[RMDB]
Source information
This 207-nucleotide RNA was probed chemically with DMS and 2A3.

RNA sequence: GGGAACGACUCGAGUAGAGUCGAAAAGCGUACUACAACUGCGAAGGCGAGCAACAGCCUUAUAUUGGAUUGCUCCCAAAUAGGAGCAAUCAGGUAAGGACAUGCUCGCUGGAGGUAGUUGUAUCGCAAAAGUGCAAAGUCUUCGGACUUUGCACAACCAUUAAUUGGAGUUCGCUCCAAUUAAUGGAAAAGAAACAACAACAACAAC
Reactivity to DMS in 0.01 (KOAc 150mM, MgCl2 10mM, bicine 150mM(pH8.5), 24C), signal-to-noise 2, nucleotides 027 to 156: g030c010g030u020a040c090u000a000c030a020a060c000u000g010c000g020a300a300g000g010c000g030a010g000c020a050a120c050a260g000c020c030u000u000a010u000a040u000u000g020g000a020u000u010g020c030u010c000c000c010a050a150a190u010a030g000g000a070g000c010a010a000u010c000a040g000g000u000a000a020g030g010a060c010a300u000g000c000u000c000g030c010u000g000g010a300g020g000u000a020g010u000u010g000u000a000u000c030g030c010a090a080a060a090g010u000g030c000a010a010a000g030u010c000u000u000c300g010g000a020c000u010u000u030g010c000a030c000a020a060
Reactivity to 2A3 in 0.01 (KOAc 150mM, MgCl2 10mM, bicine 150mM(pH8.5), 24C), signal-to-noise 6, nucleotides 027 to 156: g000c010g040u090a070c040u010a010c030a020a000c000u010g010c010g020a040a030g030g000c000g010a000g000c000a010a130c050a160g050c010c000u020u010a040u010a040u030u150g240g010a000u000u000g000c000u040c000c020c030a160a250a100u300a080g000g000a000g000c000a000a000u000c000a000g010g010u000a000a000g000g020a050c050a150u030g010c010u000c000g000c000u010g000g000a010g290g000u000a000g000u000u010g000u000a010u160c000g000c000a030a040a010a130g000u000g000c000a000a010a000g000u000c010u070u180c300g040g000a000c000u000u000u000g000c000a000c000a000a000
For 2A3 the reverse transcriptase was SuperScript II with manganese.
DMS adducts were read by reverse transcription with MarathonRT.